[RMDB]
Chemical mapping of a 207-nucleotide RNA with DMS and 2A3. The reactions ran in a buffer of 150 mM KOAc, 10 mM MgCl2 and 150 mM bicine (pH 8.5), at 24 C. The 2A3 profile rests on 956 reads.
RNA sequence: GGGAACGACUCGAGUAGAGUCGAAAAAGCGGCGAGUCAGUGGUACGCCAUUGACUCGCCGCAAUACGUUCAUCCUAAUUUAAUCAAAUUAGGACGGAAGUAGUCGUGAGACGAAGGAACGCAUUAAAAAACGUAGCGGUCUUCGGACCGCUACGAACUCAUAUUAAUGGUUCGCCAUUAAUAUGAGAAAAGAAACAACAACAACAAC
Reactivity to DMS in 0.01 (KOAc 150mM, MgCl2 10mM, bicine 150mM(pH8.5), 24C), signal-to-noise 1, nucleotides 027 to 156: a120g010c030g010g030c010g010a020g020u010c010a030g000u000g030g010u000a050c300g080c060c000a030u000u010g020a070c000u020c000g020c000c000g010c010a000a010u000a030c030g030u000u000c010a170u010c000c000u010a010a000u010u000u000a200a160u010c180a010a070a010u010u000a030g010g010a000c040g030g000a050a030g000u000a130g010u010c050g010u030g010a300g010a090c010g010a150a240g000g030a080a030c090g000c020a040u010u030a000a050a100a050a060a140c030g010u000a030g010c020g000g000u000c000u010u010c300g040g050a010c040c000g000c000u000a000c010g010a010a010
Reactivity to 2A3 in 0.01 (KOAc 150mM, MgCl2 10mM, bicine 150mM(pH8.5), 24C), signal-to-noise 1, nucleotides 027 to 156: a010g000c000g000g000c030g000a000g000u000c010a010g000u010g000g040u030a070c230g010c050c010a000u000u000g000a000c000u020c000g000c010c000g000c000a000a020u020a000c010g000u010u000c000a010u000c000c000u020a010a070u030u020u100a300a300u280c300a090a000a000u010u000a000g010g010a010c010g030g000a010a010g000u000a010g000u000c020g020u000g080a060g000a000c020g000a000a000g010g010a010a000c010g050c020a030u110u300a140a050a030a040a000a010c020g010u000a000g010c010g030g020u000c000u040u040c130g060g020a000c000c000g000c000u000a000c000g000a000a000